[RMDB]
RNA sequence: GGGAACGACUCGAGUAGAGUCGAAAAUAACAGGUGAGUAGAUGAUUCGCGUUAAGUGUGUGUGAAUGGGAUGUCGUCACACAACGAAGCGAGAGCGCGGUGAAUCAUUGCAUCCGCUCCAAAACAAUACACUACCCAGGUUCGCCUGGGUAGUGUAAAAAGAAACAACAACAACAAC
Reactivity to DMS in 0.01 (KOAc 150mM, MgCl2 10mM, bicine 150mM(pH8.5), 24C), signal-to-noise 1, nucleotides 027 to 126: u010a150a060c140a170g000g030u000g010a040g000u000a290g010a030u000g000a040u000u000c030g010c010g010u000u000a020a120g030u010g010u000g030u000g000u000g010a080a040u000g000g010g010a060u000g000u000c120g010u000c010a060c010a010c000a030a040c070g010a030a080g000c030g000a230g010a140g030c000g000c100g020g020u000g000a010a030u000c040a030u000u000g000c020a010u030c000c000g000c000u000c000c000a060a040a000a080c160a080a080